[RMDB]
RNA sequence: GGGAACGACUCGAGUAGAGUCGAAAACUCAACUGUGCUACUGUAAUACGCUCAACAUCGGUUGAGCGUAUUACAGUGGCACAGAUCUACGAGAGAUCUCCUUUCUAUCGCAUGUUAAGUGUUAACUUAACGUGCGAUAGGAAGGAGUUGAGCGUAGCGAACCUUCUUAGUUCGCUAAGAAGGUUCGAAAAGAAACAACAACAACAAC
Reactivity to DMS in 0.01 (KOAc 150mM, MgCl2 10mM, bicine 150mM(pH8.5), 24C), signal-to-noise 1, nucleotides 027 to 156: c010u000c000a060a040c000u010g020u000g010c000u000a030c000u000g030u000a030a010u010a010c000g000c000u010c000a020a000c010a280u010c210g110g020u000u000g010a010g030c010g020u000a000u000u000a000c000a020g000u000g000g020c010a000c010a000g000a010u000c000u000a160c090g010a150g010a120g000a060u000c010u010c000c000u000u000u000c000u000a000u000c010g020c000a010u000g000u000u000a010a020g010u000g050u000u010a090a060c010u000u000a000a020c000g050u010g000c010g000a000u010a000g010g000a000a000g000g010a000g000u000u000g000a070g030c010g000u000a040g020
Reactivity to 2A3 in 0.01 (KOAc 150mM, MgCl2 10mM, bicine 150mM(pH8.5), 24C), signal-to-noise 3, nucleotides 027 to 156: c010u020c020a030a020c000u000g000u000g010c000u000a010c000u010g000u000a000a000u000a000c010g000c000u010c000a010a020c030a250u300c210g220g000u000u000g000a000g000c000g000u000a000u000u000a000c000a000g010u000g000g000c000a000c000a000g000a000u000c000u000a000c010g020a000g010a010g040a140u030c000u000c010c000u000u000u000c000u000a000u000c000g000c000a000u010g000u000u000a010a000g010u010g110u300u280a080a030c000u000u010a000a000c000g000u000g000c000g000a000u000a000g000g000a000a000g020g000a000g000u000u000g000a010g020c010g010u000a000g010